Conditions: 150 mM KOAc, 10 mM MgCl2 and 150 mM bicine (pH 8.5), 24 C.
This 177-nucleotide RNA was probed chemically with DMS and 2A3.
DMS adducts were read by reverse transcription with MarathonRT.
RNA sequence: GGGAACGACUCGAGUAGAGUCGAAAAUGGGCACUGGUGGAGGUCUGACUCCAUCUACAUGGUUUAUAUCCUUAGAUUGAGGUGUACAUGGUUGUGUUUGUAUUCACAUCGUGACAGACCCGAACCGUCGUGCAAAAUAGUUCGCUAUUUUGCACGAAAAAGAAACAACAACAACAAC
Reactivity to DMS in 0.01 (KOAc 150mM, MgCl2 10mM, bicine 150mM(pH8.5), 24C), signal-to-noise 6, nucleotides 027 to 126: u040g010g000g010c100a110c100u030g000g020u010g000g000a190g000g000u000c020u020g000a110c010u000c020c050a020u000c010u010a030c300a040u030g000g010u010u030u060a120u060a100u010c000c010u000u000a000g010a030u010u010g020a030g010g010u000g010u010a040c030a010u000g010g010u010u000g000u000g010u030u010u030g000u010a080u000u010c010a000c020a060u000c120g020u000g010a100c030a030g000a020c000c000c010g000a290a020c000c020g010
Reactivity to 2A3 in 0.01 (KOAc 150mM, MgCl2 10mM, bicine 150mM(pH8.5), 24C), signal-to-noise 7, nucleotides 027 to 126: u110g020g040g060c090a040c130u130g000g000u020g020g040a090g000g010u020c010u020g030a060c000u000c010c010a000u000c000u000a010c040a100u120g000g070u050u140u070a210u110a060u270c000c000u010u010a010g010a030u020u020g030a010g000g100u160g060u170a050c010a010u070g210g000u130u050g020u010g040u040u070u190g250u120a200u050u070c000a000c000a040u040c030g010u010g020a020c010a000g020a010c000c010c000g000a010a000c000c010g010

Values are in units of 0.01, from 0 to 300, in steps of 10.
For DMS, 15,900 sequencing reads were counted.